The record gives the reactivity of an RNA of 177 nucleotides to 2A3.
RNA sequence: GGGAACGACUCGAGUAGAGUCGAAAAGAAGAGAAUAGCGGUGUAAGUGCAGCCCGUCUUACACCGUAAGGCACAGCGGAAACGCUGAUGUGAAAUACAGGGCUGGGAGACGGAAGUAGACCGUCAACGGCACUGAGUACUUCGGUACUCAGUGCCGAAAAGAAACAACAACAACAAC
Reactivity to 2A3 in 0.01 (KOAc 150mM, MgCl2 10mM, bicine 150mM(pH8.5), 24C), signal-to-noise 1, nucleotides 027 to 126: g140a090a000g080a010g200a000a060u120a090g000c000g010g000u020g000u000a000a020g010u020g060c000a000g000c000c000c000g000u030c000u020u000a000c000a000c000c000g000u000a100a050g080g000c010a000c000a000g030c000g000g000a060a090a000c100g010c000u000g080a070u000g000u000g020a070a000a000u280a010c110a030g000g000g030c000u000g040g040g030a020g000a000c000g020g010a210a000g170u300a030g000a040c000c000g000u000c000a010a040